[RMDB]
RNA sequence: GGGAACGACUCGAGUAGAGUCGAAAAGAAAACUACACGCUAUAAUUUUCUAUAAAGAUGGCCGACGAACAGGCAACUACUACUUACAAGCAGGUGAUUCCAAUGGACGUGUCACGGUUGAUGCACGACUCUAGUCGUGUUUCGACACGACUAGAGUAAAAGAAACAACAACAACAAC
Reactivity to 2A3 in 0.01 (KOAc 150mM, MgCl2 10mM, bicine 150mM(pH8.5), 24C), signal-to-noise 2, nucleotides 027 to 126: g020a020a030a000a000c060u110a040c080a070c080g070c020u040a050u060a300a140u000u110u040u060c040u000a150u030a290a210a050g080a070u050g030g040c000c000g060a060c040g000a060a030c020a060g030g000c020a000a000c010u100a010c010u000a010c010u100u070a070c020a010a110g030c040a020g130g000u060g040a100u040u010c020c000a020a110u050g070g000a020c020g010u050g010u080c000a020c010g060g090u110u240g010a070u080g020c020a010c040g070
Reactivity to DMS in 0.01 (KOAc 150mM, MgCl2 10mM, bicine 150mM(pH8.5), 24C), signal-to-noise 4, nucleotides 027 to 126: g000a060a010a050a090c060u000a040c060a080c110g030c070u000a080u030a060a080u000u000u000u000c030u000a120u010a080a090a100g010a070u020g010g010c030c040g020a110c110g010a050a080c130a080g000g000c050a050a070c060u000a050c050u000a060c100u010u000a090c110a080a080g010c050a030g000g000u010g000a120u000u010c030c030a080a080u010g010g020a120c070g010u000g000u000c040a050c070g020g010u010u000g000a130u000g020c050a040c100g010

Source: RMDB library OK2TRN, as collected in RNAgym. Chemical mapping of a 177-nucleotide RNA with 2A3 and DMS. The 2A3 profile rests on 1,171 reads. Conditions: 150 mM KOAc, 10 mM MgCl2 and 150 mM bicine (pH 8.5), 24 C.